[RMDB]
RNA sequence: GGGAACGACUCGAGUAGAGUCGAAAAGAUAUGGACUUACGAGGACAUGGACACGACGAAGUCGGAAACGACAGAGUGUUUGUCUACCCACCGUAAGUCCUAAGUCAAACAGCCCUUCGGGGCUGAAGAGAUUAACGUACUUCGGUACGUUAAUCUCAAAAGAAACAACAACAACAAC
Reactivity to 2A3 in 0.01 (KOAc 150mM, MgCl2 10mM, bicine 150mM(pH8.5), 24C), signal-to-noise 2, nucleotides 027 to 126: g030a030u070a050u130g000g000a000c010u010u000a000c000g040a060g040g030a040c040a170u250g070g000a010c000a000c060g300a020c060g030a100a020g020u000c010g000g030a070a090a020c000g030a000c000a020g040a030g020u070g060u050u110u020g040u000c020u020a140c010c020c030a090c080c000g010u000a000a010g000u000c000c000u000a020a000g000u000c020a030a070a180c000a000g010c000c010c000u020u080c270g060g000g000g000c010u010g000a030a020
Reactivity to DMS in 0.01 (KOAc 150mM, MgCl2 10mM, bicine 150mM(pH8.5), 24C), signal-to-noise 3, nucleotides 027 to 126: g000a040u000a300u000g020g000a010c000u000u000a000c030g030a180g010g030a110c150a070u000g030g000a000c000a030c150g020a050c100g000a300a180g000u000c000g000g010a050a050a160c000g010a010c000a040g000a300g010u000g010u000u000u000g020u010c030u000a090c080c000c040a180c100c020g000u000a000a000g000u000c000c000u000a000a070g020u000c000a090a100a160c000a010g000c020c000c000u010u030c140g040g000g000g000c000u000g000a020a030